[RMDB]
RNA sequence: GGGAACGACUCGAGUAGAGUCGAAAACGACCGCAGUUCGCUGCGGUCGAAAAGAACUGACUACCGUUCGCCUAGCCGGUGUCAGUUUAAGCGCGGAGAUUAAAACCCUGACGUUCGCGUCAGGGAACGAUAAUAAUUUGUUCGCAAAUUAUUAUCGAAAAGAAACAACAACAACAAC
Reactivity to DMS in 0.01 (KOAc 150mM, MgCl2 10mM, bicine 150mM(pH8.5), 24C), signal-to-noise 6, nucleotides 027 to 126: c010g010a010c010c000g030c000a010g010u000u010c190g020c010u000g030c000g020g000u000c000g000a010a040a100a170g000a020a010c000u010g000a020c010u010a030c010c000g000u000u010c130g010c090c060u010a100g010c300c010g000g010u000g010u000c000a010g010u000u000u000a040a130g010c080g000c060g010g010a100g000a120u010u010a040a100a140a110c000c000c000u000g000a020c000g020u000u010c190g020c020g000u000c000a010g000g000g000a000a010
Reactivity to 2A3 in 0.01 (KOAc 150mM, MgCl2 10mM, bicine 150mM(pH8.5), 24C), signal-to-noise 3, nucleotides 027 to 126: c010g010a000c000c010g000c000a010g020u050u090c180g040c090u000g000c010g010g000u000c000g000a000a010a000a010g020a000a000c000u000g020a000c020u120a050c090c000g020u080u160c050g080c050c070u090a060g050c030c000g010g010u000g000u010c000a000g000u000u020u020a080a020g020c070g000c060g110g080a100g000a080u170u280a070a070a110a140c010c000c000u000g000a000c000g020u060u070c300g010c010g080u000c000a000g000g000g000a010a000
The record gives the reactivity of an RNA of 177 nucleotides to DMS and 2A3.
Source: RMDB library M2PK50, as collected in RNAgym.
For DMS, 8,606 sequencing reads were counted.
Conditions: 150 mM KOAc, 10 mM MgCl2 and 150 mM bicine (pH 8.5), 24 C.